[RMDB]
RNA sequence: GGGAACGACUCGAGUAGAGUCGAAAAGCAAAAGUGUUGCGGACCUGCGUAGUUUCGAAAAGCGGACGGCCACGACGGCCCUUUGGGUGGGGUUGCAGCCGUAGCGCAUCGCAAAGACGCCGAGGUCUGGACGAAGCUGAUUCGUCAGCUUCGUCCAAAAAGAAACAACAACAACAAC
Reactivity to 2A3 in 0.01 (KOAc 150mM, MgCl2 10mM, bicine 150mM(pH8.5), 24C), signal-to-noise 1, nucleotides 027 to 126: g040c070a000a020a020a090g080u030g040u040u030g070c000g020g030a030c000c000u030g050c000g010u080a080g050u000u030u000c030g000a000a000a000a000g020c000g000g010a020c000g010g000c050c000a100c120g230a080c000g050g000c000c000c000u150u210u130g300g050g050u230g010g000g010g000u040u050g000c000a000g000c000c000g000u000a000g000c000g030c000a000u000c000g000c050a000a000a000g030a000c000g060c050c090g150a000g040g020u000c010

An RNA of 177 nucleotides, treated with 2A3 and read out base by base. The RNA was probed in 150 mM KOAc, 10 mM MgCl2 and 150 mM bicine (pH 8.5) at 24 C. Reactivities are given for positions 27 through 126.